Source: RMDB library OK3TST, as collected in RNAgym. This 207-nucleotide RNA was probed chemically with 2A3. Conditions: 150 mM KOAc, 10 mM MgCl2 and 150 mM bicine (pH 8.5), 24 C. Values are in units of 0.01, from 0 to 300, in steps of 10.

RNA sequence: GGGAACGACUCGAGUAGAGUCGAAAAGGCUGACAUUCAUUGCUUACCUUGAACCAGGCACUGUGCUUUUACAAGGAUUAUUUUAAGUGAAUCCUCAGAACAGCACUACAACGUGGGUAUUGCUGUUGUCAUUAUUUGCAGAUCAGAAAAUGAAAACACCGAUCUCGAGAUUCGUCUCGAGAUCGGUAAAAGAAACAACAACAACAAC
Reactivity to 2A3 in 0.01 (KOAc 150mM, MgCl2 10mM, bicine 150mM(pH8.5), 24C), signal-to-noise 1, nucleotides 027 to 156: g070g000c030u030g030a070c020a100u150u040c010a090u000u260g000c020u070u080a120c000c000u010u050g020a040a030c060c050a110g050g000c060a000c120u070g020u030g010c030u010u070u000u150a100c030a020a030g000g000a000u000u020a070u040u110u040u140a150a170g010u060g120a030a060u000c020c000u040c070a020g040a040a000c000a050g030c030a000c020u000a020c000a150a000c070g020u060g060g150g000u050a070u030u030g000c010u030g060u080u060g020u050c000a000u020u200a020u030u070u130g010c020a020g050a140u100c020a020g070a060a290a020a000u210g110a000a150a000a000c070